[RMDB]
Record summary
This 177-nucleotide RNA was probed chemically with DMS and 2A3. The reactions ran in a buffer of 150 mM KOAc, 10 mM MgCl2 and 150 mM bicine (pH 8.5), at 24 C. For 2A3 the reverse transcriptase was SuperScript II with manganese. 2A3 is a SHAPE reagent: it acylates the 2'-hydroxyl of flexible nucleotides of all four kinds.

RNA sequence: GGGAACGACUCGAGUAGAGUCGAAAACGUGGUGGCCUCAUUGUUCGCCGCGAUCAUCGGGUCGAUCUCGUUCUGGGGGUCUAUCGUCGCGUUCGGCAAGUUGCAGGAGAUCAUCUCCGGGCGGCCGCGACCCAUAUCAUUUCGAUGAUAUGGGUCGAAAAGAAACAACAACAACAAC
Reactivity to DMS in 0.01 (KOAc 150mM, MgCl2 10mM, bicine 150mM(pH8.5), 24C), signal-to-noise 3, nucleotides 027 to 126: c060g060u010g020g040u000g000g000c040c080u010c250a120u070u030g000u000u000c020g010c090c000g000c000g000a090u030c130a130u010c030g010g010g030u020c070g040a030u000c000u010c020g030u020u040c080u050g000g000g020g000g020u000c030u000a080u010c060g020u000c040g000c110g000u000u000c010g000g010c000a040a070g030u010u000g000c070a090g040g000a060g000a270u030c180a150u000c010u000c020c010g000g010g000c050g010g000c030c010g020
Reactivity to 2A3 in 0.01 (KOAc 150mM, MgCl2 10mM, bicine 150mM(pH8.5), 24C), signal-to-noise 4, nucleotides 027 to 126: c050g020u050g020g020u020g020g020c020c020u120c100a230u130u210g060u140u120c020g000c010c000g020c020g030a070u080c020a070u040c010g000g000g040u020c010g010a010u030c030u000c040g020u140u060c060u080g050g010g020g000g010u000c030u080a090u080c030g070u010c000g000c010g060u080u030c000g010g010c050a060a070g050u070u120g090c070a070g060g030a030g010a070u140c030a080u030c080u000c010c000g010g050g000c000g000g000c000c020g000